[RMDB]
RNA sequence: GGGAACGACUCGAGUAGAGUCGAAAAAUCAAAUUGCACCUAUCAAUAGAAAGCGUGUUUUUGUGCCAUGUGUCUAUAGAUGGUACGACAAAAAUAUCGAAGUCAAAGGCGGAUUUGAUAUUCAACAACUACCCAUAGCGUUCGCGCUAUGGGUAGUAAAAGAAACAACAACAACAAC
Reactivity to DMS in 0.01 (KOAc 150mM, MgCl2 10mM, bicine 150mM(pH8.5), 24C), signal-to-noise 2, nucleotides 027 to 126: a060u000c000a020a010a010u010u000g030c010a070c000c010u000a170u000c160a080a150u000a130g000a050a050a050g010c010g010u000g000u000u000u000u000u000g010u000g000c020c010a010u000g010u010g040u030c240u010a180u010a060g010a010u000g000g000u000a050c090g000a020c050a000a000a000a000a000u000a000u010c000g000a040a060g010u000c050a100a080a060g020g020c030g010g000a000u000u000u000g010a010u000a090u000u000c000a070a070c130a040
Reactivity to 2A3 in 0.01 (KOAc 150mM, MgCl2 10mM, bicine 150mM(pH8.5), 24C), signal-to-noise 2, nucleotides 027 to 126: a000u010c000a000a000a000u010u100g070c020a030c050c010u070a060u200c050a110a130u110a150g080a060a080a010g050c000g010u000g100u020u010u020u020u030g040u000g010c000c020a060u130g080u000g090u090c090u190a160u110a210g080a060u070g000g000u040a070c000g030a010c040a010a010a000a040a000u040a030u210c010g020a050a020g140u090c060a170a030a010g040g000c020g000g000a000u000u000u050g010a010u010a080u050u080c020a030a040c010a010